[RMDB]
RNA sequence: GGGAACGACUCGAGUAGAGUCGAAAACAUAGGAACUAUUCUGCCCCCAGAGUGAAUGAGAGAUUAGACACUUUCAAGACAGCUGAGCUCUUAUGUGAAUCUCUCCUUAGAGCUUUUGAUAUGUCUAAUAGAGCCACUCAUUCGUGAGUGGCUCUAUAAAAGAAACAACAACAACAAC
Reactivity to DMS in 0.01 (KOAc 150mM, MgCl2 10mM, bicine 150mM(pH8.5), 24C), signal-to-noise 1, nucleotides 027 to 126: c030a110u050a060g000g000a070a220c120u000a110u040u020c110u020g000c000c000c000c080c110a140g000a050g000u010g000a270a150u000g000a010g020a090g000a150u040u000a050g080a300c060a000c020u000u000u030c130a060a070g020a140c090a040g030c030u000g000a040g000c060u000c000u010u000a030u000g000u020g060a130a140u010c130u060c210u010c000c000u000u000a010g000a020g070c060u000u000u000u000g060a080u080a040u000g000u010c000u000a090
Reactivity to 2A3 in 0.01 (KOAc 150mM, MgCl2 10mM, bicine 150mM(pH8.5), 24C), signal-to-noise 1, nucleotides 027 to 126: c030a050u140a120g080g080a010a020c040u130a110u200u020c030u060g100c000c010c000c010c010a020g000a000g030u010g120a160a050u170g020a000g000a000g000a030u000u030a100g140a090c030a040c000u000u120u040c000a020a090g020a020c010a000g100c060u030g040a000g000c000u000c000u030u220a010u050g100u060g000a000a060u040c020u000c000u000c200c000u000u020a000g000a000g050c100u000u000u070u040g250a150u120a100u080g000u000c050u000a050